[RMDB]
Chemical mapping of a 177-nucleotide RNA with DMS and 2A3. 2A3 adducts were read by reverse transcription with SuperScript II with manganese.
RNA sequence: GGGAACGACUCGAGUAGAGUCGAAAAGAUAUGGAGUGGCGUCACUACCCACCUAGUGAGCGAACGUUUGACGUACCUCGGAAACGAGGUACCGAGUUCCCACUAGAGGUGACGCCACUCCUAAGUCGAUCUCUAGUAAGUUCGCUUACUAGAGAUCAAAAGAAACAACAACAACAAC
Reactivity to DMS in 0.01 (KOAc 150mM, MgCl2 10mM, bicine 150mM(pH8.5), 24C), signal-to-noise 8, nucleotides 027 to 126: g010a090u000a300u000g000g010a020g040u000g010g010c010g000u000c010a000c010u000a090c050c050c130a300c120c010u000a000g010u000g000a060g030c180g010a010a010c020g010u010u010u010g020a260c300g000u000a000c000c000u010c000g000g000a090a100a240c000g000a020g000g000u000a000c000c010g010a090g000u000u000c000c010c000a020c020u000a000g000a090g020g000u000g000a010c000g010c000c000a000c000u000c000c000u010a010a090g020u010c110
Reactivity to 2A3 in 0.01 (KOAc 150mM, MgCl2 10mM, bicine 150mM(pH8.5), 24C), signal-to-noise 7, nucleotides 027 to 126: g120a050u200a140u300g010g000a000g010u010g000g020c010g030u010c000a010c020u140a170c030c080c000a050c020c010u010a010g010u010g120a250g090c300g050a010a000c040g060u080u300u300g090a050c060g000u010a000c000c000u000c000g020g020a070a100a040c020g010a000g000g000u000a000c000c000g000a020g000u010u010c010c010c000a010c000u000a000g020a030g010g000u000g000a000c000g000c000c000a000c000u000c000c000u000a000a010g000u000c030
It was measured as part of the RMDB library TTRINS. Reactivities are given for positions 27 through 126. Conditions: 150 mM KOAc, 10 mM MgCl2 and 150 mM bicine (pH 8.5), 24 C.